Background
Structure probing data (DMS and 2A3) for a 207-nucleotide construct. For 2A3 the reverse transcriptase was SuperScript II with manganese. For DMS the reverse transcriptase was MarathonRT. 2A3 is a SHAPE reagent: it acylates the 2'-hydroxyl of flexible nucleotides of all four kinds.
[RMDB]
RNA sequence: GGGAACGACUCGAGUAGAGUCGAAAAUGUGGAAGUCCUGCUCGGGGCGGAAGCAUUAAAACCAUUCGAGCUAGUCAAUGCGUGGCGUGUCUCUCCGCAGCGUGAUGGCGAAUGUAAAGAGUGACUAUUGACCACGCAACGUUCGCGUUGCGUGGAAUCAAGGUAUAUCCUUCGGGAUAUACCUUGAAAAAGAAACAACAACAACAAC
Reactivity to DMS in 0.01 (KOAc 150mM, MgCl2 10mM, bicine 150mM(pH8.5), 24C), signal-to-noise 3, nucleotides 027 to 156: u010g010u000g000g000a300a300g010u010c040c000u000g010c200u010c140g010g000g010g050c010g000g010a300a300g000c030a050u000u000a050a070a080a110c030c010a120u000u000c020g020a060g010c030u010a080g020u000c060a030a060u000g030c030g020u000g010g000c020g000u010g010u020c020u010c030u000c080c030g020c000a130g000c030g020u010g000a160u000g010g000c020g010a080a070u010g000u010a090a100a110g000a100g010u000g010a130c020u000a150u000u010g000a070c010c000a010c020g040c000a030a000c010g020u010u010c210g000c070g030u000u000g000c000g000u000g000g010a030a030
Reactivity to 2A3 in 0.01 (KOAc 150mM, MgCl2 10mM, bicine 150mM(pH8.5), 24C), signal-to-noise 5, nucleotides 027 to 156: u020g000u030g030g030a040a020g020u010c000c030u060g080c090u070c070g010g000g000g000c020g010g000a000a000g010c010a000u030u140a010a010a010a060c100c020a040u120u160c060g020a020g010c010u040a010g030u020c010a050a120u080g010c060g130u050g170g000c010g010u020g000u020c000u000c000u000c000c000g000c020a040g010c010g030u050g070a100u050g010g020c040g030a040a030u120g040u220a010a070a010g030a010g010u020g010a000c020u060a110u120u200g090a060c000c000a010c000g000c000a000a010c000g010u040u050c190g000c020g050u010u000g000c000g000u000g010g000a000a010

Conditions: 150 mM KOAc, 10 mM MgCl2 and 150 mM bicine (pH 8.5), 24 C. Values cover nucleotides 27 to 156.